[RMDB]
RNA sequence: GGGAACGACUCGAGUAGAGUCGAAAAAUUCCCCCCGAUAGAUACGGGGUUUAGUGCCCUUAUCGGUUCCGGCCGAUCAGCAGACCGGGCUUCCAGACAGGGCCGGGUGGCAGAGGCCAGGCCGCACAUAUAGUAUGCGCUUCGGCGCAUACUAUAUAAAAGAAACAACAACAACAAC
Reactivity to 2A3 in 0.01 (KOAc 150mM, MgCl2 10mM, bicine 150mM(pH8.5), 24C), signal-to-noise 2, nucleotides 027 to 126: a000u040u020c010c000c000c010c000c010g060a100u080a180g160a060u080a210c100g030g000g020g020u030u060u100a120g000u060g010c050c000c000u070u080a040u070c000g020g010u110u150c080c050g010g000c000c000g080a100u030c020a020g010c000a010g090a170c010c000g100g000g000c010u120u060c050c010a190g040a300c060a110g000g000g070c000c000g000g000g000u040g060g070c050a020g000a030g040g040c000c000a010g000g040c060c010g020c010a050c010
Reactivity to DMS in 0.01 (KOAc 150mM, MgCl2 10mM, bicine 150mM(pH8.5), 24C), signal-to-noise 3, nucleotides 027 to 126: a300u000u000c000c000c000c050c000c010g000a100u010a050g010a160u030a050c130g000g010g000g000u020u020u010a090g010u020g000c030c020c010u020u000a070u020c020g000g000u000u030c040c060g010g020c010c000g010a100u000c040a030g000c000a070g030a040c000c000g010g000g010c020u020u040c040c070a150g000a100c260a170g000g000g000c010c000g020g020g000u020g000g000c000a100g000a100g000g000c020c010a110g020g010c010c020g050c270a090c170
Background
This 177-nucleotide RNA was probed chemically with 2A3 and DMS. For DMS the reverse transcriptase was MarathonRT. Conditions: 150 mM KOAc, 10 mM MgCl2 and 150 mM bicine (pH 8.5), 24 C. Reactivities are given for positions 27 through 126.